RNA sequence: GGGAACGACUCGAGUAGAGUCGAAAAAAGCUAUCAGAAAUCGUUGCAGUUGAUGGUGUAUCAAUAACUUCUGCUGAAAGCUGAUCAAUUAAGUUUAUGUGUGCAAGAAUAUCUUGUUCUGUAAUGAGUGGGGUACAAUUUUCGAAUUGUACCCCACAAAAGAAACAACAACAACAAC
Reactivity to DMS in 0.01 (KOAc 150mM, MgCl2 10mM, bicine 150mM(pH8.5), 24C), signal-to-noise 2, nucleotides 027 to 126: a020a070g000c000u000a090u000c010a000g010a070a080a030u000c080g030u000u000g000c100a270g020u000u000g020a060u000g020g000u020g020u000a030u000c020a060a050u000a040a110c070u000u000c060u020g010c010u000g000a010a140a010g010c010u000g000a140u010c090a070a130u020u000a050a070g000u010u000u010a020u000g010u020g040u010g000c020a020a040g030a170a240u010a080u010c030u000u000g010u000u000c020u000g030u010a070a090u000g000a150